[RMDB]
RNA sequence: GGGAACGACUCGAGUAGAGUCGAAAACGCGCCGGCGAACUGGGAGCCGACCAGGCGUUGACGUUCCUGCGUGAAGUGGACAGCAUCAACAUGCGCCGGCGCACCAAGAUGGUGGAACUGGCCACCAGUGGACUGUUGCGUUCGCGCAACAGUCCACAAAAGAAACAACAACAACAAC
Reactivity to 2A3 in 0.01 (KOAc 150mM, MgCl2 10mM, bicine 150mM(pH8.5), 24C), signal-to-noise 2, nucleotides 027 to 126: c050g000c000g000c010c000g010g000c020g040a050a010c030u040g000g000g000a050g110c010c030g100a140c020c010a010g000g090c070g020u010u020g030a010c000g040u080u010c000c020u010g070c090g090u240g100a150a070g050u160g070g000a040c000a120g020c020a040u000c000a000a050c010a090u150g020c000g050c000c000g020g060c000g000c000a000c000c000a040a040g140a110u150g000g000u000g000g050a120a290c040u050g300g000c000c000a000c010c010a000
Chemical mapping of a 177-nucleotide RNA with 2A3.